[RMDB]
RNA sequence: GGGAACGACUCGAGUAGAGUCGAAAACGACAAGGGUGUAAAGAUCGCUCUUUUACUCGGCAUGAUACCACCGUUAUCGGGUCAACAGAGUAGUUGCAAAUGACAACAAUGCUCAGGGUUAUGGUCUAAAAGUUCGUACCCUUCGGGGUACGAACAAGACCUAAUUAUUCUUCGGAAUAAUUAGGUCAAAAGAAACAACAACAACAAC
Reactivity to 2A3 in 0.01 (KOAc 150mM, MgCl2 10mM, bicine 150mM(pH8.5), 24C), signal-to-noise 5, nucleotides 027 to 156: c070g080a010c050a030a020g030g040g030u050g050u180a190a150a060g120a120u210c030g000c020u020c020u030u060u030u040a100c070u040c010g010g000c010a030u110g010a010u020a040c020c010a010c000c010g080u060u050a020u090c060g000g000g000u020c010a010a020c040a040g030a010g010u060a030g010u020u020g020c050a050a240a300u200g060a160c010a040a000c010a020a090u090g010c010u010c030a020g050g010g000u090u150a080u170g050g020u030c040u090a050a040a050a090g010u000u000c000g000u000a000c000c000c000u010u010c090g030g000g000g000u000a000c000g000a000a000c000a000a000
Reactivity to DMS in 0.01 (KOAc 150mM, MgCl2 10mM, bicine 150mM(pH8.5), 24C), signal-to-noise 2, nucleotides 027 to 156: c020g010a110c130a000a060g030g000g000u010g020u010a030a110a130g020a110u000c050g020c010u010c020u000u000u000u000a090c060u000c010g000g040c020a060u000g020a080u000a090c050c000a150c000c010g020u000u010a040u000c100g020g010g000u010c030a110a130c140a100g000a030g010u010a060g050u000u000g010c030a050a080a190u000g010a130c010a050a020c020a010a070u000g000c010u010c010a110g030g020g040u000u000a040u000g020g000u000c040u010a030a030a110a170g020u000u000c010g010u000a010c000c010c010u000u010c300g020g000g030g030u010a000c000g010a000a020c010a020a120